[RMDB]
RNA sequence: GGGAACGACUCGAGUAGAGUCGAAAAUACGCCAAUUUCGAUUGGCGUAACACGCAAACCGGCCCAAAGGCAUUUUAUGCGUACGGUGGCGAAAGCCUAAAAACGCACUGUCAUUCGUGACAGUGAAUCAGCCUAACGAAUUCGUUCGUUAGGCUGAAAAAGAAACAACAACAACAAC
Reactivity to DMS in 0.01 (KOAc 150mM, MgCl2 10mM, bicine 150mM(pH8.5), 24C), signal-to-noise 2, nucleotides 027 to 126: u000a030c010g040c000c000a040a000u000u000u030c130g010a060u000u000g000g000c010g010u000a010a060c170a010c020g020c060a030a080a070c050c030g030g000c040c020c080a110a110a090g000g000c010a030u000u000u010u010a060u010g000c020g030u010a080c150g000g000u000g000g020c010g000a080a080a130g010c020c010u010a000a050a070a100a160c190g010c020a010c000u000g000u010c000a040u000u020c190g020u010g000a000c010a010g010u000g010a070a020
Reactivity to 2A3 in 0.01 (KOAc 150mM, MgCl2 10mM, bicine 150mM(pH8.5), 24C), signal-to-noise 2, nucleotides 027 to 126: u040a010c000g010c000c000a000a020u000u100u090c170g100a020u020u000g010g000c000g020u000a000a020c030a010c020g050c020a160a010a100c030c010g110g040c030c030c010a080a070a040g070g000c030a050u100u070u000u210a050u070g010c030g020u010a070c040g050g020u010g010g010c020g040a110a020a000g000c050c040u180a110a070a030a020a000c060g000c010a010c000u000g000u000c010a030u000u100c170g050u000g000a000c020a000g010u010g030a000a080
An RNA of 177 nucleotides, treated with DMS and 2A3 and read out base by base. DMS adducts were read by reverse transcription with MarathonRT. For 2A3, 2,437 sequencing reads were counted. Reactivities are given for positions 27 through 126. The RNA was probed in 150 mM KOAc, 10 mM MgCl2 and 150 mM bicine (pH 8.5) at 24 C. 2A3 adducts were read by reverse transcription with SuperScript II with manganese. High DMS reactivity at an A or C suggests that its Watson-Crick edge is free. Source: RMDB library M2PK50, as collected in RNAgym.